[RMDB]
RNA sequence: GGGAACGACUCGAGUAGAGUCGAAAAGUGCACGUCGCCUUGAGAAGAAGUCGGGCAUUCGGAAACUGACACUCCUGGAAUGCAUUCAGGAGCGCGGUGAUAUUCUUUCGUGGAUCGGCGAUGUUGCCGAUCGUAUAGAACACGUACGGUCCAUCCGCUUGUCUCAAAUUUUCGAAUUUGAGACAAGAAAAGAAACAACAACAACAAC
Reactivity to DMS in 0.01 (KOAc 150mM, MgCl2 10mM, bicine 150mM(pH8.5), 24C), signal-to-noise 3, nucleotides 027 to 156: g000u000g000c020a080c050g020u000c030g040c030c000u000u000g010a170g010a100a090g000a040a060g020u000c040g000g000g020c040a070u000u000c040g020g000a110a070a060c030u000g000a270c000a020c010u000c010c000u010g020g010a030a180u000g050c130a300u000u000c020a040g020g000a030g040c020g010c050g000g010u000g010a110u000a060u000u000c050u010u010u000c030g030u010g020g010a060u000c060g030g010c000g010a150u000g010u000u010g020c040c000g010a020u000c000g040u010a020u000a070g010a050a140c120a090c090g000u000a010c030g010g010u000c000c030a210u000c010c040g010
Reactivity to 2A3 in 0.01 (KOAc 150mM, MgCl2 10mM, bicine 150mM(pH8.5), 24C), signal-to-noise 7, nucleotides 027 to 156: g070u080g000c030a010c010g030u020c020g030c010c030u120u150g090a090g010a140a010g030a050a010g050u050c040g010g050g040c080a060u120u110c040g090g030a060a080a040c030u030g100a070c040a020c040u000c000c000u010g000g070a130a090u190g150c110a170u040u030c000a010g020g000a010g000c010g000c020g020g010u030g050a050u060a180u210u040c000u030u150u060c050g040u100g090g050a100u050c020g010g000c010g050a100u110g080u140u100g000c020c010g000a010u010c000g000u040a040u020a050g110a070a030c080a010c110g020u060a010c010g000g020u020c040c000a050u040c030c010g000